Chemical mapping of a 177-nucleotide RNA with 2A3 and DMS.
It was measured as part of the RMDB library M2PK50.

RNA sequence: GGGAACGACUCGAGUAGAGUCGAAAACGACUUACCUUCGGGUAAGUCGACAUAGGUGAGUUCAUCGGAUAGCUGCCUAGGUGUGUUCAUCGGAUAGCUGCCACAUGUAACGGUUCGCCGUUACAAAUCGGAUGCUAGGAUUCGUCCUAGCAUCCGAAAAAGAAACAACAACAACAAC
Reactivity to 2A3 in 0.01 (KOAc 150mM, MgCl2 10mM, bicine 150mM(pH8.5), 24C), signal-to-noise 1, nucleotides 027 to 126: c010g000a000c000u020u020a000c010c000u030u080c190g080g030g020u000a010a010g000u000c000g000a000c000a060u160a090g000g080u070g180a060g040u040u060c060a040u060c040g110g020a110u100a070g000c000u010g020c020c000u070a120g090g000u040g000u020g020u040u050c030a000u020c010g080g000a040u040a050g010c070u050g020c070c010a070c020a110u080g000u040a000a000c000g000g040u060u050c240g000c040c000g000u030u000a000c000a000a040a030
Reactivity to DMS in 0.01 (KOAc 150mM, MgCl2 10mM, bicine 150mM(pH8.5), 24C), signal-to-noise 1, nucleotides 027 to 126: c010g000a010c000u000u000a000c000c000u000u020c130g000g030g000u000a010a010g000u000c000g010a000c150a040u000a090g000g020u000g000a120g020u000u000c140a070u000c000g010g000a050u000a100g040c060u010g010c000c010u020a050g000g030u000g020u000g000u010u000c100a040u000c020g000g000a060u000a010g000c000u000g000c060c020a070c230a110u000g000u000a010a000c020g010g020u020u010c250g010c020c000g030u010u000a010c020a040a030a050

For 2A3 the reverse transcriptase was SuperScript II with manganese.